[RMDB]
RNA sequence: GGGAACGACUCGAGUAGAGUCGAAAAGGGGUCAAGCAAGAUCCGAUCACAGGCAACAGCUAUACUGAAGCCUCCACGGUAUAGACAUGCCUGUGUGCGGAUUGAUGACCUUGACGGAGGCACCCAAAAACCAUUCUUCGUUCGCGAAGAAUGGUAAUGUGCUUUACAACUUCGGUUGUAAAGCACAAAAAGAAACAACAACAACAAC
Reactivity to 2A3 in 0.01 (KOAc 150mM, MgCl2 10mM, bicine 150mM(pH8.5), 24C), signal-to-noise 2, nucleotides 027 to 156: g080g010g020g050u040c030a030a050g060c100a200a040g110a090u020c020c000g010a110u040c000a010c010a020g000g030c050a300a050c050a300g000c000u000a000u010a000c000u000g090a180a060g010c000c000u030c000c010a000c020g000g000u000a000u000a020g110a060c160a240u300g000c000c010u000g030u010g000u040g100c000g000g000a000u020u020g020a040u030g000a000c010c030u010u020g040a020c040g000g000a000g010g000c010a010c000c000c020a080a130a000a000a000c000c000a000u010u010c000u000u000c000g020u000u040c140g040c020g130a000a000g000a000a000u000g000g000u010a010a060
Conditions: 150 mM KOAc, 10 mM MgCl2 and 150 mM bicine (pH 8.5), 24 C. An RNA of 207 nucleotides, treated with 2A3 and read out base by base. For 2A3 the reverse transcriptase was SuperScript II with manganese. Values cover nucleotides 27 to 156. The data come from the RNA Mapping Database (RMDB), library RNAMAK.